Chemical mapping of a 177-nucleotide RNA with DMS and 2A3. As a SHAPE reagent, 2A3 marks flexible, mostly unpaired nucleotides at the ribose 2'-OH. The RNA was probed in 150 mM KOAc, 10 mM MgCl2 and 150 mM bicine (pH 8.5) at 24 C. It was measured as part of the RMDB library OK1LIB. For 2A3 the reverse transcriptase was SuperScript II with manganese. Reactivities are rounded to 0.1 and cut off at 0 and 3. The 2A3 profile rests on 3,457 reads.

[RMDB]
RNA sequence: GGGAACGACUCGAGUAGAGUCGAAAAUGAGGUUCUCUAUAUAUCCGCACCGUCGUAAACUAGUGCGCCACUGUUGAGACUACCUUCCUAGUAUAAGGCGGACAUUGUGCGGGGCGAAGCGCCGUGACAAAUAGCAGUCCUUCGGGACUGCUAUUUGAAAAGAAACAACAACAACAAC
Reactivity to DMS in 0.01 (KOAc 150mM, MgCl2 10mM, bicine 150mM(pH8.5), 24C), signal-to-noise 5, nucleotides 027 to 126: u010g000a060g000g010u000u000c020u000c030u020a100u010a100u020a090u040c070c020g000c010a080c020c120g020u000c050g020u020a070a100a060c070u000a070g020u000g000c020g010c050c030a080c090u000g020u010u020g010a100g010a100c080u000a040c060c020u000u010c030c010u000a080g010u010a060u030a080a110g000g000c060g010g010a100c120a060u030u020g010u000g010c000g010g010g010g000c030g010a090a070g000c020g000c010c020g000u010g000a150
Reactivity to 2A3 in 0.01 (KOAc 150mM, MgCl2 10mM, bicine 150mM(pH8.5), 24C), signal-to-noise 5, nucleotides 027 to 126: u170g030a020g050g020u060u010c030u000c040u000a000u020a020u000a010u220c010c010g010c010a020c030c010g060u060c040g100u130a040a080a100c040u020a050g050u020g070c010g020c030c010a070c070u060g080u130u100g060a050g020a040c030u080a090c030c010u040u030c000c010u020a050g060u040a170u030a150a040g030g000c000g020g030a040c060a100u110u150g020u020g060c000g000g010g000g020c040g040a060a030g010c020g000c060c020g040u050g030a010